[RMDB]
The record gives the reactivity of an RNA of 177 nucleotides to DMS and 2A3. The reactions ran in a buffer of 150 mM KOAc, 10 mM MgCl2 and 150 mM bicine (pH 8.5), at 24 C. Source: RMDB library OK1LIB, as collected in RNAgym.
RNA sequence: GGGAACGACUCGAGUAGAGUCGAAAAAAACAUUACCUACUACAUUUGAAUUUACAGAUAUUGCCGGAAUUGUUAAAGGUGCUUCUAAAGGUGAAGGUUUAGGUAAUAAAUUCUUAUCACAUAUUAGUGACAUUCCAUAUUUCGAUAUGGAAUGUCAAAAAGAAACAACAACAACAAC
Reactivity to DMS in 0.01 (KOAc 150mM, MgCl2 10mM, bicine 150mM(pH8.5), 24C), signal-to-noise 3, nucleotides 027 to 126: a070a060a050c130a020u010u000a000c000c000u000a020c160u020a040c020a040u030u000u000g000a270a040u000u000u000a140c170a040g000a040u010a080u000u030g000c000c010g010g000a090a060u030u030g000u050u030a040a100a160g020g030u000g040c100u020u000c010u000a060a080a050g000g010u160g000a030a030g010g000u000u000u000a010g000g000u000a000a000u010a010a050a120u020u000c010u000u020a090u000c120a060c100a060u000a060u020u030a070g010
Reactivity to 2A3 in 0.01 (KOAc 150mM, MgCl2 10mM, bicine 150mM(pH8.5), 24C), signal-to-noise 5, nucleotides 027 to 126: a000a000a000c070a010u030u020a020c000c000u020a060c040u020a000c050a080u060u050u050g110a130a110u090u140u070a070c090a010g090a040u070a110u140u130g020c020c010g030g130a150a170u140u080g110u130u240a040a040a060g030g020u010g020c030u000u010c010u020a090a080a070g060g000u070g060a020a000g010g000u050u060u020a010g000g000u000a010a000u010a040a110a000u100u070c020u030u090a130u190c060a040c070a130u220a160u110u200a100g110